[RMDB]
RNA sequence: GGGAACGACUCGAGUAGAGUCGAAAACAUUACGAAUUCAGUCGCAAAUUGUAGAAUUAGCUACUCUACGAUUUAGUGAGCGUUAGUAACGUUGUAAUAUAAUAUAGUCUUUGGAAGGAGUAUAUUGGAGCCGCGGACAAGUUCGCUUGUCCGCGAACGAUAAGGACCAGUUCGCUGGUCCUUAUCGAAAAGAAACAACAACAACAAC
Reactivity to 2A3 in 0.01 (KOAc 150mM, MgCl2 10mM, bicine 150mM(pH8.5), 24C), signal-to-noise 4, nucleotides 027 to 156: c030a040u120u210a020c040g040a090a120u160u180c060a090g080u010c000g000c020a000a010a010u000u010g010u000a000g000a010a030u070u040a030g020c020u040a020c010u000c000u010a000c000g000a000u010u030u100a070g000u020g020a060g090c030g030u050u100a050g040u060a080a070c050g000u010u010g010u020a110a140u090a050u020a090a030u050a010u030a070g150u020c050u040u110u130g080g040a080a090g030g030a030g050u040a020u000a010u050u080g050g040a070g060c080c000g000c020g000g000a000c000a010a010g010u030u100c140g030c180u000u010g000u000c000c000g000c000g000a010a010
Reactivity to DMS in 0.01 (KOAc 150mM, MgCl2 10mM, bicine 150mM(pH8.5), 24C), signal-to-noise 1, nucleotides 027 to 156: c010a020u000u000a010c000g000a040a050u000u000c030a070g000u000c000g050c010a070a060a020u010u010g050u000a010g010a060a050u010u000a250g020c300u010a060c060u000c020u010a020c020g010a010u000u010u010a180g030u000g010a070g050c140g000u000u000a000g000u000a010a030c050g050u010u000g030u010a090a100u000a090u020a040a080u000a070u000a070g010u000c020u000u000u020g050g010a200a170g010g000a050g010u000a030u000a050u000u000g000g010a160g050c000c000g090c000g000g040a020c010a030a020g000u000u000c300g110c000u000u000g010u000c000c000g060c000g040a030a010